[RMDB]
RNA sequence: GGGAACGACUCGAGUAGAGUCGAAAAGAAAGAGUAGUCAGUAGGUGGGGGGUGAGAACGGCUUCAUACAGGAGCUGAUGCGCAGUUACCCAGCUCCUAUGAGAUGCCUUUCCUCACCCCUUCACAAAGCCUAUGUCCCUUUCGAGGGACAUAGGCUAAAAGAAACAACAACAACAAC
Reactivity to 2A3 in 0.01 (KOAc 150mM, MgCl2 10mM, bicine 150mM(pH8.5), 24C), signal-to-noise 2, nucleotides 027 to 126: g120a000a110a000g100a080g060u300a100g000u150c110a010g010u040a050g160g000u000g000g000g000g000g000g000u020g000a000g000a000a000c040g010g000c040u000u000c000a000u000a120c140a030g000g000a020g000c000u010g020a120u110g100c130g050c150a110g040u130u220a200c040c060c000a010g000c000u000c000c000u030a020u020g020a030g090a090u230g020c000c000u010u040u000c060c000u040c000a000c000c000c000c000u070u000c000a000c000a020a000
Reactivity to DMS in 0.01 (KOAc 150mM, MgCl2 10mM, bicine 150mM(pH8.5), 24C), signal-to-noise 2, nucleotides 027 to 126: g000a080a120a100g010a080g050u030a080g000u000c080a130g030u010a080g040g030u000g020g010g020g000g000g020u020g000a050g010a060a000c300g030g020c000u000u000c000a020u000a090c250a080g000g000a000g000c000u000g040a090u000g000c140g010c140a180g000u020u040a050c140c020c090a020g000c000u000c000c030u000a040u000g000a010g050a040u000g000c020c000u000u000u070c070c060u000c010a020c000c000c010c040u000u000c000a050c020a030a120

The data come from the RNA Mapping Database (RMDB), library RFM100. Structure probing data (2A3 and DMS) for a 177-nucleotide construct. The 2A3 profile rests on 723 reads. Values cover nucleotides 27 to 126. The reactions ran in a buffer of 150 mM KOAc, 10 mM MgCl2 and 150 mM bicine (pH 8.5), at 24 C.